Chemical mapping of a 207-nucleotide RNA with DMS and 2A3. The RNA was probed in 150 mM KOAc, 10 mM MgCl2 and 150 mM bicine (pH 8.5) at 24 C. The data come from the RNA Mapping Database (RMDB), library RNAMAK.
[RMDB]
RNA sequence: GGGAACGACUCGAGUAGAGUCGAAAAGGGGUCAGCAUGAUGACCGUCAGUUGUCAGUAUUUAGCCUGAAGCCUCCACGGGCUUAUUAGAUACUUGGAUUUACUGACGCAAGUGCUGACGGAGGCACCCAAAACGGGUCAGAUUCGUCUGACCCGAAUCUGUUAUAAGUGUUCGCACUUAUAACAGAAAAAGAAACAACAACAACAAC
Reactivity to DMS in 0.01 (KOAc 150mM, MgCl2 10mM, bicine 150mM(pH8.5), 24C), signal-to-noise 2, nucleotides 027 to 156: g000g030g030g030u000c020a000g040c000a040u010g010a160u020g020a080c160c020g020u000c010a050g020u000u000g000u000c050a080g000u010a020u000u000u010a080g020c050c040u000g000a070a130g030c040c000u000c020c130a300c170g010g020g030c010u000u000a000u010u010a100g010a070u000a010c030u020u010g030g000a090u010u000u010a020c010u000g000a030c000g020c050a040a210g010u000g000c020u010g010a030c000g010g040a080g110g010c040a150c000c010c020a090a030a100a210c030g010g040g010u010c020a020g000a090u000u010c300g020u010c000u000g020a020c000c000c030g040a010a020
Reactivity to 2A3 in 0.01 (KOAc 150mM, MgCl2 10mM, bicine 150mM(pH8.5), 24C), signal-to-noise 5, nucleotides 027 to 156: g140g010g060g010u010c000a010g000c020a020u060g070a150u130g050a160c060c020g000u000c000a010g000u030u050g090u070c120a060g010u010a030u030u110u050a010g010c010c010u040g090a080a040g000c010c010u020c030c020a020c020g000g010g030c020u040u020a060u040u110a070g060a040u020a040c040u130u260g190g010a070u200u200u220a020c000u000g000a000c020g000c040a170a160g000u000g000c010u000g000a010c040g000g000a000g000g000c020a040c010c010c010a010a040a010a030c010g000g000g010u000c000a000g000a020u020u090c150g050u000c100u010g010a020c000c000c000g000a000a010
For 2A3 the reverse transcriptase was SuperScript II with manganese.